[RMDB]
RNA sequence: GGGAACGACUCGAGUAGAGUCGAAAAUACACUGGCGGGGCCAGCCGGCGCCCGCGAGGACGCGCGGAGCCCCCGCCGUGGCCGGGACCGCGGGCUGGAACGCCCCCGCGCACCAGGAAUGUCUUGUAAUAUUGAGAUUGUUCGCAAUCUCAAUAUUAAAAGAAACAACAACAACAAC
Reactivity to 2A3 in 0.01 (KOAc 150mM, MgCl2 10mM, bicine 150mM(pH8.5), 24C), signal-to-noise 1, nucleotides 027 to 126: u170a010c030a020c060u090g060g010c000g000g030g000g000c020c030a020g020c030c000g130g010c000g010c000c000c000g020c020g000a070g040g000a020c010g060c030g010c000g030g000a060g070c000c000c000c000c040g000c000c000g000u000g040g000c040c000g000g020g010a060c080c050g020c050g000g000g000c020u020g060g020a080a040c070g160c010c020c000c000c010g030c020g000c010a120c010c030a030g040g050a130a090u150g030u030c010u010u010g050u030
Reactivity to DMS in 0.01 (KOAc 150mM, MgCl2 10mM, bicine 150mM(pH8.5), 24C), signal-to-noise 1, nucleotides 027 to 126: u010a150c070a060c040u000g020g020c030g000g000g000g000c030c030a050g000c010c020g000g020c000g030c010c000c000g000c190g010a100g000g000a020c040g000c230g000c000g000g000a200g000c270c090c030c000c020g020c010c000g030u000g000g030c070c020g000g000g010a130c210c020g000c090g000g010g030c000u010g010g000a080a090c120g010c300c020c010c000c020g010c080g000c080a050c090c000a070g000g000a130a080u010g000u000c040u000u000g000u000

About this RNA
Conditions: 150 mM KOAc, 10 mM MgCl2 and 150 mM bicine (pH 8.5), 24 C. This 177-nucleotide RNA was probed chemically with 2A3 and DMS. The 2A3 profile rests on 2,280 reads. High DMS reactivity at an A or C suggests that its Watson-Crick edge is free. It was measured as part of the RMDB libraries RFM100 and RFMREP. For DMS the reverse transcriptase was MarathonRT.